[RMDB]
RNA sequence: GGGAACGACUCGAGUAGAGUCGAAAAAUCGUGCGGCGGUUGCCGCCCACGAUCCAAUCGUUACCCGGCACUGGUCAGGCGCAUUUCCAUCGAGAGGCGAAGAGCGAUUCUUCUCAUAGUGAGACACGAUCAGACGAGGUUUCGACCUCGUCUGAUCAAAAGAAACAACAACAACAAC
Reactivity to 2A3 in 0.01 (KOAc 150mM, MgCl2 10mM, bicine 150mM(pH8.5), 24C), signal-to-noise 1, nucleotides 027 to 126: a010u010c000g000u010g030c140g020g000c010g010g100u230u170g300c090c010g000c000c000c000a010c010g000a020u030c020c010a010a120u060c030g050u060u060a200c010c000c000g000g000c050a050c120u060g030g000u080c010a010g050g000c040g000c030a010u050u040u050c010c040a080u140c040g050a020g010a010g150g010c050g080a090a060g070a050g050c010g050a050u060u000c020u040u000c000u020c010a090u160a060g170u120g080a080g010a010c030a020c100
Reactivity to DMS in 0.01 (KOAc 150mM, MgCl2 10mM, bicine 150mM(pH8.5), 24C), signal-to-noise 1, nucleotides 027 to 126: a060u000c000g020u010g000c180g030g020c000g000g000u000u010g030c050c000g020c000c000c000a000c040g000a010u000c020c070a050a190u000c070g000u010u000a060c020c050c000g000g050c030a030c020u000g000g010u000c050a040g040g040c090g000c050a060u000u020u000c030c050a090u010c110g000a090g000a130g010g000c060g010a040a010g000a070g010c160g010a070u020u010c060u000u000c010u000c050a070u010a100g030u010g000a050g010a070c300a090c120